[RMDB]
This 207-nucleotide RNA was probed chemically with 2A3. Values are in units of 0.01, from 0 to 300, in steps of 10. Reactivities are given for positions 27 through 156.
RNA sequence: GGGAACGACUCGAGUAGAGUCGAAAAGGGGUCAGAUCCAAUGUGGUGUAUAAGCCAACAGCGUACUGAAGCCUCCACGGUACGACAUGGCUUAUUACACCGAAGGAUCUGACGGAGGCACCCAAAAGCCCUUCUCCUACUUCGGUAGGAGAAGGGCCAGUCGGUUCUUCUUCGGAAGAACCGACUGAAAAGAAACAACAACAACAAC
Reactivity to 2A3 in 0.01 (KOAc 150mM, MgCl2 10mM, bicine 150mM(pH8.5), 24C), signal-to-noise 1, nucleotides 027 to 156: g000g010g120g000u000c000a000g000a040u000c000c040a180a200u300g090u150g020g000u000g000u000a000u010a000a000g000c030c000a060a110c110a200g060c000g010u000a000c000u080g090a120a020g020c000c000u000c040c000a000c000g010g000u010a010c010g090a080c140a140u190g000g010c000u000u010a020u080u070a010c000a010c040c020g000a020a010g000g000a000u020c000u000g000a010c010g000g000a000g000g080c010a050c020c000c050a080a030a020a050g000c000c000c000u020u010c000u000c000c000u010a020c000u010u030c220g100g000u000a000g010g000a000g000a000a000g000g000g000c020